[RMDB]
RNA sequence: GGGAACGACUCGAGUAGAGUCGAAAAGAUAUGGACAUGGUAGUCGCAUAAAUCCCUCGGAAACGAGAACUUUAUGAACUACGACAAACAUGUCCUAAGUCAAAACUUGUGUGUUCGCACACAAGAACUCUCUAUAUAACUUCGGUUAUAUAGAGAGAAAAGAAACAACAACAACAAC
Reactivity to DMS in 0.01 (KOAc 150mM, MgCl2 10mM, bicine 150mM(pH8.5), 24C), signal-to-noise 6, nucleotides 027 to 126: g000a060u000a300u000g000g000a020c010a000u000g000g000u000a190g000u000c070g040c010a010u010a010a020a010u000c140c120c010u000c010g010g000a100a090a210c010g010a020g010a080a100c250u000u000u000a010u000g000a200a030c100u010a150c010g010a040c120a030a100a300c010a000u000g000u000c000c000u000a020a100g010u010c030a080a060a080a150c010u000u000g010u000g010u000g000u010u010c220g020c010a020c000a010c000a000a010g000a110a160
Reactivity to 2A3 in 0.01 (KOAc 150mM, MgCl2 10mM, bicine 150mM(pH8.5), 24C), signal-to-noise 7, nucleotides 027 to 126: g010a010u060a040u110g010g000a010c000a000u030g080g010u060a030g000u020c060g000c100a010u000a010a020a020u230c050c020c000u000c000g010g030a070a060a050c010g000a010g020a040a010c040u010u020u000a010u020g030a060a050c070u130a040c230g090a030c110a030a300a000c000a010u000g000u000c000c000u000a090a010g040u010c030a010a020a160a250c010u010u000g000u000g010u000g020u050u080c300g040c120a000c000a000c000a000a000g000a010a010
Notes:
An RNA of 177 nucleotides, treated with DMS and 2A3 and read out base by base. It was measured as part of the RMDB library TTRDEL. For 2A3 the reverse transcriptase was SuperScript II with manganese. Conditions: 150 mM KOAc, 10 mM MgCl2 and 150 mM bicine (pH 8.5), 24 C. For 2A3, 18,541 sequencing reads were counted.